[RMDB]
RNA sequence: GGGAACGACUCGAGUAGAGUCGAAAAUGUGAGUGGGGUCUUGUAGGGCAUGGCUGCCUGCUACUUGGCUUUGGGGCCUGUCUCCUGGCAAUCAGUCAGGAGGCAGUGCUGUGGGCAGUUGUAGGGCUCACUACGAACUCUUCGGAGUUCGUAGUGAAAAAGAAACAACAACAACAAC
Reactivity to DMS in 0.01 (KOAc 150mM, MgCl2 10mM, bicine 150mM(pH8.5), 24C), signal-to-noise 1, nucleotides 027 to 126: u010g000u000g000a100g020u000g000g010g000g010u010c080u010u000g000u000a080g030g000g000c120a060u000g000g020c040u010g010c000c000u010g010c010u000a070c110u010u000g010g010c090u000u000u000g020g030g010g020c060c000u000g020u000c000u000c000c000u020g010g020c010a160a140u000c240a160g010u000c000a010g020g000a010g000g010c000a000g020u010g030c050u010g020u000g000g000g000c030a030g010u000u010g020u010a110g000g000g000c120
Reactivity to 2A3 in 0.01 (KOAc 150mM, MgCl2 10mM, bicine 150mM(pH8.5), 24C), signal-to-noise 1, nucleotides 027 to 126: u160g070u040g040a070g050u090g010g000g000g080u010c030u060u140g030u140a070g030g000g020c040a060u090g010g000c000u000g030c030c010u000g000c010u010a130c060u140u080g090g000c020u120u080u100g060g040g020g000c020c000u000g010u040c000u040c000c000u000g030g040c030a070a180u200c080a260g020u000c000a000g000g000a000g010g040c010a000g000u060g000c010u000g030u030g030g030g030c030a060g000u060u020g070u110a030g020g040g090c030
Conditions: 150 mM KOAc, 10 mM MgCl2 and 150 mM bicine (pH 8.5), 24 C. The record gives the reactivity of an RNA of 177 nucleotides to DMS and 2A3. For DMS, 2,172 sequencing reads were counted. It was measured as part of the RMDB library OK2TST. For 2A3, 1,096 sequencing reads were counted. DMS adducts were read by reverse transcription with MarathonRT. For 2A3 the reverse transcriptase was SuperScript II with manganese. Reactivities are rounded to 0.1 and cut off at 0 and 3.